Chemical mapping of a 177-nucleotide RNA with 2A3.
[RMDB]
RNA sequence: GGGAACGACUCGAGUAGAGUCGAAAAACGUGGAUUUUAAGGACAGGAAAGGCAUCCUACUACGACCCGAUACUAGCUACAAGAAUUGGAGGAGAGACCUCCCUGAAAAAGUGCGGCAGCUCAGGGAGGCCAAAACUUGGUUCGCCAAGUUUUGGCCAAAAGAAACAACAACAACAAC
Reactivity to 2A3 in 0.01 (KOAc 150mM, MgCl2 10mM, bicine 150mM(pH8.5), 24C), signal-to-noise 1, nucleotides 027 to 126: a000c210g000u030g050g020a120u060u000u000u150a060a040g000g020a170c040a020g100g110a260a140a000g100g080c000a110u000c000c000u040a200c000u000a000c000g080a040c000c000c010g000a000u010a110c020u020a020g030c020u020a020c090a110a000g030a020a140u060u090g090g000a160g060g060a070g000a020g030a100c000c000u000c000c060c000u020g100a140a050a000a040a040g190u210g030c000g030g060c020a010g000c030u000c020a080g000g000g010a000